The data come from the RNA Mapping Database (RMDB), library TTRDES. The record gives the reactivity of an RNA of 177 nucleotides to 2A3 and DMS. Values cover nucleotides 27 to 126. The DMS profile rests on 3,665 reads.

RNA sequence: GGGAACGACUCGAGUAGAGUCGAAAAGAUAUGGACGGAGAGAGGGAGCUGGGUAUCGGAAACGAUACAUAGCGAAGAACUCUGUCCGUCCUAAGUCAAAAGGUCCAGUUCUUCGGAACUGGACCAACCAUCUUACAGUGUUCGCACUGUAAGAUGGAAAAGAAACAACAACAACAAC
Reactivity to 2A3 in 0.01 (KOAc 150mM, MgCl2 10mM, bicine 150mM(pH8.5), 24C), signal-to-noise 2, nucleotides 027 to 126: g000a000u020a000u070g000g010a000c000g000g010a060g000a000g000a030g060g110g060a250g040c010u060g070g040g010u000a010u000c000g000g000a030a010a000c000g000a010u000a010c010a030u030a010g000c030g140a300a220g130a140a050c010u020c010u010g110u010c010c000g010u000c000c010u000a010a000g010u000c000a000a020a090a210g000g000u000c000c000a000g010u010u000c010u050u120c300g140g000a000a000c000u000g000g010a000c000c000a000a000
Reactivity to DMS in 0.01 (KOAc 150mM, MgCl2 10mM, bicine 150mM(pH8.5), 24C), signal-to-noise 2, nucleotides 027 to 126: g020a010u010a080u010g010g010a010c000g000g000a030g010a010g000a030g010g020g020a300g010c000u010g010g000g000u000a000u010c000g030g010a030a010a070c000g010a010u000a010c020a030u000a010g040c010g010a140a210g000a110a160c000u010c000u000g000u000c010c000g000u000c000c000u000a000a050g000u000c020a110a080a120a130g020g000u000c000c000a020g000u000u000c000u000u010c230g020g000a010a000c000u000g000g000a000c010c010a020a050